[RMDB]
RNA sequence: GGGAACGACUCGAGUAGAGUCGAAAAGAUAUGGAUCCAGGGAGAAGAUCCAUCGGAAACGAUGGGACUUCGAGGAUCUGGAAUCCUAAGUCAAACCGACCAUAGACGUUCGCGUCUAUGGUCGGAAGUGCUAUAUCAUCUUCGGAUGAUAUAGCACAAAAGAAACAACAACAACAAC
Reactivity to DMS in 0.01 (KOAc 150mM, MgCl2 10mM, bicine 150mM(pH8.5), 24C), signal-to-noise 2, nucleotides 027 to 126: g010a050u000a300u010g000g010a000u000c000c000a010g000g020g010a060g010a030a020g010a020u010c000c000a000u000c000g000g010a060a140a150c000g000a010u000g000g020g000a090c000u000u000c000g010a060g040g000a010u010c000u010g000g000a040a080u000c000c000u000a050a180g020u010c060a080a150a230c010c000g000a010c000c000a000u000a000g000a000c010g010u010u030c240g010c000g000u010c010u010a000u000g010g010u000c000g000g010a020a030
Reactivity to 2A3 in 0.01 (KOAc 150mM, MgCl2 10mM, bicine 150mM(pH8.5), 24C), signal-to-noise 2, nucleotides 027 to 126: g040a030u060a020u080g000g000a000u000c000c010a000g000g000g000a040g020a000a020g020a050u020c010c000a000u000c020g010g100a080a010a040c020g000a010u020g040g000g030a010c000u010u010c010g000a080g000g000a020u000c020u000g010g010a030a190u060c000c000u050a240a040g120u020c070a050a070a100c030c010g000a000c020c010a000u020a020g010a000c020g050u080u120c300g040c010g120u040c000u000a000u010g020g000u010c000g000g000a010a000